[RMDB]
RNA sequence: GGGAACGACUCGAGUAGAGUCGAAAACAUCGCCGCAAUCGGCCCAUCGCGAGCGUGGACUGGUCCGCUAGCAUCCCGAUGAACACGGGCGUACUUUUCGGCGUCCUGAACGUUGCUGUAAGGGUGUGGCUCCUGGAAGUACCGACCGGUGACGCCACCAAAGUCUAGUGUUCGCACUAGACUUUGGAAAAGAAACAACAACAACAAC
Reactivity to 2A3 in 0.01 (KOAc 150mM, MgCl2 10mM, bicine 150mM(pH8.5), 24C), signal-to-noise 2, nucleotides 027 to 156: c050a030u040c010g000c010c010g040c060a050a070u060c050g100g000c100c030c000a060u090c070g020c050g040a020g050c060g000u110g030g040a100c050u090g100g100u070c030c000g010c070u070a010g010c000a050u040c020c030c040g050a100u060g060a080a030c100a040c140g020g030g000c040g010u090a200c020u110u180u060u200c100g010g000c010g000u020c000c040u040g020a060a010c050g000u000u000g000c010u030g070u120a030a040g020g000g060u190g030u140g080g010c010u070c000c030u040g070g060a040a010g000u040a040c050c000g030a030c020c010g020g000u040g000a020c030g080c000c010a020